The record gives the reactivity of an RNA of 177 nucleotides to 2A3 and DMS.
2A3 is a SHAPE reagent: it acylates the 2'-hydroxyl of flexible nucleotides of all four kinds.
For 2A3, 2,776 sequencing reads were counted.
For DMS the reverse transcriptase was MarathonRT.

RNA sequence: GGGAACGACUCGAGUAGAGUCGAAAAGAUAUGGAGAACUACGCACCGCAGCUAAUGCGCUCGGAAACGAGCGAACUACAUUUGAAAAAAUUGCGCUCCUAAGUCAAAACACACGUUCGCGUGUGAACCAUGUUCUUCAGUUCGCUGAAGAACAUGGAAAAGAAACAACAACAACAAC
Reactivity to 2A3 in 0.01 (KOAc 150mM, MgCl2 10mM, bicine 150mM(pH8.5), 24C), signal-to-noise 3, nucleotides 027 to 126: g030a030u100a060u170g050g050a040g040a140a070c110u150a040c250g020c080a070c020c070g010c100a030g030c010u070a020a030u050g040c040g000c000u000c000g000g040a050a020a020c000g020a000g000c020g010a020a020c010u080a030c040a090u030u100u170g270a160a130a050a020a070a140u130u050g000c030g030c020u000c000c030u030a140a000g030u030c020a000a090a130a100c020a000c000a000c020g020u090u110c300g020c050g170u040g000u010g020a010a010
Reactivity to DMS in 0.01 (KOAc 150mM, MgCl2 10mM, bicine 150mM(pH8.5), 24C), signal-to-noise 2, nucleotides 027 to 126: g000a030u010a180u000g000g010a040g000a080a030c080u010a220c020g020c100a120c180c050g020c170a050g020c040u020a040a070u000g000c000g020c000u000c000g000g000a050a050a140c020g000a020g000c010g000a040a020c110u010a200c020a010u010u020u000g000a020a030a100a050a110a070u010u010g010c090g010c010u000c000c000u010a000a080g000u000c080a120a080a130a130c000a010c010a010c040g020u000u010c190g040c000g010u000g000u010g000a090a200